Conditions: 150 mM KOAc, 10 mM MgCl2 and 150 mM bicine (pH 8.5), 24 C. An RNA of 177 nucleotides, treated with DMS and 2A3 and read out base by base. For 2A3, 16,954 sequencing reads were counted. For DMS, 11,546 sequencing reads were counted. Source: RMDB library OK1LIB, as collected in RNAgym.
RNA sequence: GGGAACGACUCGAGUAGAGUCGAAAAGCUGCCGCCGAGCGGGAGGAACCGGCGAUUGGAGGGACUCAGCCGGUGACAUACGUGCUUGUCCGUCGUCCACAGCAUCCAGGACGCCCACCGGUACAGCCUCGUUAGUGUUAUUCGUAACACUAACGAGAAAAGAAACAACAACAACAAC
Reactivity to DMS in 0.01 (KOAc 150mM, MgCl2 10mM, bicine 150mM(pH8.5), 24C), signal-to-noise 5, nucleotides 027 to 126: g020c010u000g020c090c040g020c030c030g000a100g040c040g000g000g010a060g000g020a210a050c020c010g010g000c010g010a160u010u000g000g000a080g000g010g000a110c130u010c070a260g000c000c000g010g020u010g000a150c090a050u000a060c030g000u040g020c030u020u000g010u030c030c030g030u010c030g000u020c020c010a110c160a100g030c110a070u020c060c050a110g000g000a040c060g010c060c000c020a060c040c020g020g010u000a100c090a070g000c080
Reactivity to 2A3 in 0.01 (KOAc 150mM, MgCl2 10mM, bicine 150mM(pH8.5), 24C), signal-to-noise 7, nucleotides 027 to 126: g000c010u030g020c050c080g010c020c020g040a050g030c050g000g020g020a050g020g020a040a040c000c000g000g010c030g030a060u050u170g080g030a120g030g060g040a050c040u030c090a030g000c010c000g010g000u010g030a020c020a040u170a040c040g100u130g070c040u080u110g040u060c010c020g040u050c020g020u000c020c010a060c020a050g070c010a050u060c040c030a040g010g010a010c000g000c010c010c000a050c020c010g000g010u040a030c020a020g010c000